[RMDB]
Background: The record gives the reactivity of an RNA of 177 nucleotides to 2A3 and DMS. High 2A3 reactivity points to a flexible backbone, as in loops and unpaired stretches. 2A3 adducts were read by reverse transcription with SuperScript II with manganese. The data come from the RNA Mapping Database (RMDB), library OK2TST.

RNA sequence: GGGAACGACUCGAGUAGAGUCGAAAAUGGUAACCCUCACCCCAAGUUGCAAUCGCUAACCAGAAGUUAUCGCGUGCUGAGUUUUCAUCGGUAUAAGGGCGUUUACCGAACAUGUGGCAAAGUGAGAGUAAAUGAUACCCUUCGGGGUAUCAUUUACAAAAGAAACAACAACAACAAC
Reactivity to 2A3 in 0.01 (KOAc 150mM, MgCl2 10mM, bicine 150mM(pH8.5), 24C), signal-to-noise 1, nucleotides 027 to 126: u090g040g040u020a060a050c000c000c020u020c070a100c010c030c000c010a000a030g040u110u090g000c040a050a080u090c020g000c020u020a020a040c010c010a110g040a130a010g120u050u000a090u110c030g000c020g060u000g000c020u050g000a040g050u090u020u010u160c040a050u020c020g040g030u060a100u050a160a100g010g020g000c020g010u040u070u020a030c020c020g030a000a040c040a110u110g000u020g060g080c030a030a040a080g060u080g020a070g000a000
Reactivity to DMS in 0.01 (KOAc 150mM, MgCl2 10mM, bicine 150mM(pH8.5), 24C), signal-to-noise 3, nucleotides 027 to 126: u030g000g010u020a090a090c040c010c030u000c110a120c150c000c010c010a140a090g000u000u000g000c040a080a060u010c090g010c030u030a080a080c070c040a140g010a080a130g000u000u000a020u000c060g020c070g020u000g010c020u010g010a070g000u010u000u010u000c090a090u000c020g020g020u000a030u010a070a120g000g020g000c050g010u000u010u000a030c050c020g000a030a070c100a060u000g020u010g000g000c040a030a080a090g020u000g010a100g010a130